[RMDB]
RNA sequence: GGGAACGACUCGAGUAGAGUCGAAAAUGUUUCUGAGUUUAACCAAAUCACUCAUUAUUUCAAGGAGGAAUUAGGUUAUGUCAGUACAAUUAGAAGUUAAAGAAAGAGCUAUCCGUCCACGUUCACUCGUGGCAGCUCUAUUCGUAGAGCUGCCACGAAAAGAAACAACAACAACAAC
Reactivity to 2A3 in 0.01 (KOAc 150mM, MgCl2 10mM, bicine 150mM(pH8.5), 24C), signal-to-noise 1, nucleotides 027 to 126: u030g000u000u000u000c000u000g000a000g170u020u030u030a000a000c000c000a000a000a000u040c000a060c050u030c010a010u100u060a210u000u260u220c240a190a100g070g100a000g000g000a000a130u000u000a060g190g000u000u000a000u000g050u000c000a000g000u160a000c030a040a080u140u200a090g130a300a000g000u120u220a000a000a100g190a290a000a000g000a040g000c000u100a140u080c000c000g030u080c000c000a090c160g010u000u000c040a010c080u000

Structure probing data (2A3) for a 177-nucleotide construct. 2A3 adducts were read by reverse transcription with SuperScript II with manganese. The 2A3 profile rests on 317 reads.